[RMDB]
RNA sequence: GGGAACGACUCGAGUAGAGUCGAAAAGAUAUGGACUGGCACGCAAGGCUAAGAGUCGGAAACGACUCCUAGCUGAUGACCGUGCAGUCCUAAGUCAAACCUUAAGGAUGUUCGCAUCCUUAAGGAAGUACUAUGCAGUCUUCGGACUGCAUAGUACAAAAGAAACAACAACAACAAC
Reactivity to 2A3 in 0.01 (KOAc 150mM, MgCl2 10mM, bicine 150mM(pH8.5), 24C), signal-to-noise 2, nucleotides 027 to 126: g000a000u000a020u050g000g010a000c010u040g190g290c000a000c000g040c050a110a240g000g010c010u000a000a010g000a000g030u000c000g020g000a010a000a000c000g000a000c000u010c010c000u010a010g000c000u010g030a100u020g000a010c000c000g010u020g000c010a000g010u010c000c000u000a020a000g010u010c040a120a080a170c000c000u000u000a000a000g010g000a000u030g050u090u220c300g010c180a000u000c020c000u000u010a000a000g000g000a040a000
Reactivity to DMS in 0.01 (KOAc 150mM, MgCl2 10mM, bicine 150mM(pH8.5), 24C), signal-to-noise 3, nucleotides 027 to 126: g010a010u000a040u010g010g010a010c010u010g020g010c010a000c000g020c000a050a050g010g020c000u000a010a040g020a000g000u000c000g030g000a010a000a040c010g020a010c000u010c000c020u000a010g010c000u010g000a040u010g000a040c300c000g000u000g010c010a010g010u000c000c010u000a000a060g000u000c000a170a130a280c010c000u000u000a000a010g010g000a000u000g020u000u010c300g010c010a000u000c000c000u000u000a000a000g010g000a030a050
The record gives the reactivity of an RNA of 177 nucleotides to 2A3 and DMS. Reactivities are given for positions 27 through 126. 2A3 adducts were read by reverse transcription with SuperScript II with manganese. Reactivities are rounded to 0.1 and cut off at 0 and 3. The data come from the RNA Mapping Database (RMDB), library TTRDES.